[RMDB]
RNA sequence: GGGAACGACUCGAGUAGAGUCGAAAACAUCAGGAGGACCUUCCGCGCACUUCCAAGCAGGAGCUUUCCUUCCAAGCGCACUUCCAAUCUACUCGAGAGGAGGAGCAGGAGGAGGAUUCCCACAAAAUUUCAACUAACAGUUCGCUGUUAGUUGAAAAAAAGAAACAACAACAACAAC
Reactivity to 2A3 in 0.01 (KOAc 150mM, MgCl2 10mM, bicine 150mM(pH8.5), 24C), signal-to-noise 2, nucleotides 027 to 126: c020a020u130c060a010g030g030a020g020g010a080c010c020u070u050c040c020g020c020g000c070a060c030u170u000c060c020a040a040g040c020a030g010g110a040g040c030u100u060u060c000c000u160u030c030c010a010a010g030c020g000c030a040c000u040u030c010c010a030a050u030c000u150a200c080u100c170g030a020g000a030g000g020a020g000g020a040g030c010a010g000g030a010g000g000a000g010g010a040u000u030c020c050c000a030c040a010a110a010a080
Reactivity to DMS in 0.01 (KOAc 150mM, MgCl2 10mM, bicine 150mM(pH8.5), 24C), signal-to-noise 3, nucleotides 027 to 126: c080a080u010c060a140g000g000a130g030g010a080c160c030u000u000c030c030g030c090g020c030a080c040u000u000c030c050a100a130g010c110a110g020g020a140g010c120u000u000u010c020c000u010u010c010c030a030a300g000c300g020c020a030c040u000u010c000c000a070a300u000c010u000a060c150u000c060g000a050g010a300g000g010a040g000g020a040g000c010a050g000g020a300g000g020a000g000g000a140u000u000c000c000c010a090c230a040a040a040a130
Overview
The record gives the reactivity of an RNA of 177 nucleotides to 2A3 and DMS. DMS adducts were read by reverse transcription with MarathonRT. The RNA was probed in 150 mM KOAc, 10 mM MgCl2 and 150 mM bicine (pH 8.5) at 24 C.